RNA sequence: GGGAACGACUCGAGUAGAGUCGAAAAAAGCCACAUUUGGGGAUUCAGUGGAGUGCAGCAUAGACUACCCGAGGCAUGGGUGGUGAACCCCAGAUGAUUCCUCCCCUUGGUCUUGGGCCACUGUAGCGUCGUGGUAUUGAUUCGUCAAUACCACGACAAAAGAAACAACAACAACAAC
Reactivity to 2A3 in 0.01 (KOAc 150mM, MgCl2 10mM, bicine 150mM(pH8.5), 24C), signal-to-noise 1, nucleotides 027 to 126: a000a000g100c040c010a020c000a030u020u000u000g010g020g030g000a040u120u060c020a030g060u030g130g040a070g070u090g090c040a070g020c040a150u060a280g120a080c010u030a040c000c040c050g060a130g120g000c100a100u190g000g000g000u050g000g000u090g020a020a040c000c010c000c010a000g020a030u000g010a030u050u100c000c040u040c000c000c010c050u000u040g030g020u000c010u010u100g040g050g040c040c000a050c060u110g080u090a050g050c030
Reactivity to DMS in 0.01 (KOAc 150mM, MgCl2 10mM, bicine 150mM(pH8.5), 24C), signal-to-noise 2, nucleotides 027 to 126: a070a070g030c170c180a120c040a050u000u000u010g020g030g020g000a130u000u000c050a080g000u000g010g000a040g000u000g010c040a050g010c070a050u010a180g000a040c020u000a030c010c020c000g010a180g010g010c200a080u010g000g010g000u000g010g030u000g000a040a050c010c000c000c010a030g010a030u000g010a190u000u000c010c010u000c000c000c020c010u000u000g010g020u000c030u020u000g000g010g020c020c030a030c120u000g020u000a070g010c200